[RMDB]
RNA sequence: GGGAACGACUCGAGUAGAGUCGAAAAACUCUUUCUUCUGUAUCGAGGAUCAUCGAAAUAAGCAAGAAUACUAUUUCGACGGAAAAUACCAUUUACGGGGAUUUCAAUCGAGAUACCUGAACAGGGCAAAAUACACUCAGUUCGCUGAGUGUAUUUUAAAAGAAACAACAACAACAAC
Reactivity to DMS in 0.01 (KOAc 150mM, MgCl2 10mM, bicine 150mM(pH8.5), 24C), signal-to-noise 5, nucleotides 027 to 126: a090c050u010c020u010u010u000c010u010u000c020u010g000u000a070u000c020g010a050g010g010a130u030c090a240u000c000g010a010a030a020u020a040a080g010c120a060a070g000a120a080u050a120c090u000a030u000u000u000c000g010a050c300g000g000a040a030a030a050u040a120c010c000a100u020u030u020a110c250g010g000g000g000a050u000u000u000c020a080a090u040c040g010a070g000a030u010a050c040c010u000g000a040a050c110a050g010g000g010c290
Reactivity to 2A3 in 0.01 (KOAc 150mM, MgCl2 10mM, bicine 150mM(pH8.5), 24C), signal-to-noise 9, nucleotides 027 to 126: a000c030u020c000u040u060u020c020u130u000c000u020g040u030a280u110c030g080a060g030g020a030u060c030a030u010c030g010a010a020a030u140a090a010g110c150a130a070g090a290a110u170a160c030u010a030u000u010u010c010g020a030c030g060g080a040a010a050a010u200a070c000c000a030u120u120u120a090c170g060g010g000g020a010u000u030u050c060a090a090u090c030g000a010g010a110u110a300c000c010u020g000a030a020c010a020g010g020g040c040